The record gives the reactivity of an RNA of 207 nucleotides to 2A3 and DMS. The DMS profile rests on 1,912 reads. The reactions ran in a buffer of 150 mM KOAc, 10 mM MgCl2 and 150 mM bicine (pH 8.5), at 24 C. For DMS the reverse transcriptase was MarathonRT. 2A3 adducts were read by reverse transcription with SuperScript II with manganese.
RNA sequence: GGGAACGACUCGAGUAGAGUCGAAAACGCCUUCUUCGGAAGGCGAAAAAGCGUACUACGUGUGGUAUGGGACAUGAAUGAAGGUCCCAAAUAGGACCUACAUUCAACAGCCCAUACGUAACAUCACGUAUCGCAAAAAGAACUCUUCGGAGUUCAAUGGAUGUAAUCGUUUCGACGAUUACAUCCAAAAAGAAACAACAACAACAAC
Reactivity to 2A3 in 0.01 (KOAc 150mM, MgCl2 10mM, bicine 150mM(pH8.5), 24C), signal-to-noise 1, nucleotides 027 to 156: c000g020c000c000u000u010c000u040u010c060g210g010a000a000g010g010c000g020a010a000a000a000a000g030c090g000u120a120c050u030a000c010g020u000g000u050g010g010u020a010u000g010g000g020a020c050a190u060g000a010a010u040g030a040a020g050g010u030c050c010c050a000a010a070u110a020g000g000a000c000c000u010a080c030a020u000u000c060a020a040c000a080g010c000c000c000a000u010a000c000g000u000a040a020c010a040u090c000a030c000g000u000a020u300c000g050c040a000a000a130a000a000g000a000a000c000u000c020u080u170c300g090g000a000g000u000u000c000a020a060
Reactivity to DMS in 0.01 (KOAc 150mM, MgCl2 10mM, bicine 150mM(pH8.5), 24C), signal-to-noise 1, nucleotides 027 to 156: c030g070c020c000u000u010c000u030u000c300g140g030a040a010g000g040c000g010a000a020a060a110a000g000c020g060u000a200c300u000a000c000g070u000g030u000g020g000u000a050u010g020g000g000a040c070a300u000g010a020a000u000g010a300a000g000g000u010c000c000c020a000a040a030u030a070g000g000a010c010c010u020a160c000a100u000u000c000a050a120c060a260g000c030c000c000a040u000a000c010g020u010a130a040c080a060u000c000a010c050g020u000a020u000c040g000c010a050a060a000a080a120g000a010a040c000u000c000u000u000c280g040g030a050g000u000u000c000a140a240